[RMDB]
RNA sequence: GGGAACGACUCGAGUAGAGUCGAAAAUAGUCUUUAUGGGUGAAGAGGACACAAAGCGUCAAGCAUUGAAUGUAUUCCGUAUGGAACUUCUAGGAGCUAAGGUUCAUACAGUAACAACAGGCUCUAAGGCAUCACUAUGAUUCGUCAUAGUGAUGCCAAAAGAAACAACAACAACAAC
Reactivity to 2A3 in 0.01 (KOAc 150mM, MgCl2 10mM, bicine 150mM(pH8.5), 24C), signal-to-noise 3, nucleotides 027 to 126: u110a020g020u010c030u030u090u070a190u220g080g060g000u060g040a030a010g030a070g000g030a020c030a000c020a080a050a030g070c030g110u080c120a070a020g060c030a050u020u090g110a150a190u070g040u140a110u090u120c030c010g000u020a090u130g080g010a060a040c010u050u010c020u060a090g000g040a030g000c070u070a040a000g030g000u010u070c000a000u020a160c120a110g150u230a100a030c080a010a010c000a040g110g000c000u000c020u020a050a040
Reactivity to DMS in 0.01 (KOAc 150mM, MgCl2 10mM, bicine 150mM(pH8.5), 24C), signal-to-noise 2, nucleotides 027 to 126: u020a050g000u000c030u000u000u000a110u000g000g000g020u000g010a130a010g000a070g020g050a040c110a140c020a040a030a070g010c030g000u000c070a050a110g000c050a080u000u000g000a100a060u000g010u000a190u010u000c000c040g000u000a000u010g000g000a040a040c000u000u000c060u010a100g000g000a030g000c080u010a040a040g000g000u000u000c010a010u000a030c240a290g000u010a040a030c010a100a150c170a050g020g010c010u000c000u000a050a150